[RMDB]
RNA sequence: GGGAACGACUCGAGUAGAGUCGAAAAGAUAUGGACGAAGUGGAGAAGAUAGCUACGAAGAACCAUAUCUUUCGGAAACGAAAGAUAUGGGGAGUAGUAUACUUCGAUGAAACUUCGUCCUAAGUCACUUUACUUGAGAGUUCGCUCUCAAGUAAAGAAAAGAAACAACAACAACAAC
Reactivity to 2A3 in 0.01 (KOAc 150mM, MgCl2 10mM, bicine 150mM(pH8.5), 24C), signal-to-noise 3, nucleotides 027 to 126: g020a030u090a060u150g000g000a000c010g010a020a000g010u000g030g040a050g000a010a030g040a110u300a180g050c000u000a020c010g270a300a080g020a070a010c000c000a000u010a000u020c000u000u000u000c010g020g000a090a020a050c020g000a000a000a010g000a000u000a010u000g000g010g000g020a040g000u010a000g020u040a090u190a100c010u000u000c040g300a300u020g000a010a000a000c000u000u010c000g000u000c000c000u000a000a000g000u010c010a010
Reactivity to DMS in 0.01 (KOAc 150mM, MgCl2 10mM, bicine 150mM(pH8.5), 24C), signal-to-noise 3, nucleotides 027 to 126: g030a040u000a300u000g000g000a020c010g010a030a020g010u010g030g000a070g010a010a020g020a080u020a160g010c020u000a010c010g030a130a140g010a180a260c000c000a000u010a000u010c000u000u000u000c000g000g000a110a090a240c010g010a000a010a020g000a010u000a010u000g000g020g010g000a080g010u000a010g010u010a080u000a050c010u000u000c010g000a090u010g000a170a120a020c000u000u000c000g010u000c010c000u000a010a070g010u010c040a240